Chemical mapping of a 170-nucleotide RNA with DMS and 2A3. The reactions ran in a buffer of 150 mM KOAc, 10 mM MgCl2 and 150 mM bicine (pH 8.5), at 24 C. The data come from the RNA Mapping Database (RMDB), library 15KLIB.
[RMDB]
RNA sequence: GGGAACGACUCGAGUAGAGUCGAAAAAGUGGGCCACAAGCCGGCGGAGAGAUCGAGGAUUUGGGGAGGAGAGGGGAACCGAGGGGGGUUCGAACUCAAGAAGAGAAGAUUUUCGAGGAAAUACUCCAUAGUACACGGUUCGCCGUGUACAAAAGAAACAACAACAACAAC
Reactivity to DMS in 0.01 (KOAc 150mM, MgCl2 10mM, bicine 150mM(pH8.5), 24C), signal-to-noise 4, nucleotides 027 to 129: a080g040u070g020g020g080c020c010a080c140a020a200g040c090c020g020g080c110g040g010a050g040a000g020a070u060c030g010a120g010g000a090u010u030u000g000g000g000g000a090g000g000a160g010a010g010g000g000g010a110a030c050c080g030a080g000g000g000g000g000g000u010u030c070g020a050a080c100u040c030a120a090g010a080a050g020a090g030a070a070g010a100u110u060u000u000c090g020a060g030g000a040a040a090u050a110c060u050c030c070a000u030a140
Reactivity to 2A3 in 0.01 (KOAc 150mM, MgCl2 10mM, bicine 150mM(pH8.5), 24C), signal-to-noise 5, nucleotides 027 to 129: a000g090u120g010g000g010c040c010a050c050a050a010g040c000c020g000g020c010g020g010a010g000a000g000a050u050c030g020a020g040g010a050u070u100u120g010g010g020g010a070g030g010a060g010a020g030g010g010g020a030a010c030c030g050a120g010g000g000g000g000g000u020u070c010g020a040a020c030u020c090a020a030g050a010a020g030a050g020a060a020g040a020u050u050u010u050c030g000a010g030g030a010a080a010u090a100c030u010c010c000a050u040a050
About this RNA: DMS adducts were read by reverse transcription with MarathonRT. For 2A3 the reverse transcriptase was SuperScript II with manganese. The DMS profile rests on 9,952 reads. Values cover nucleotides 27 to 129.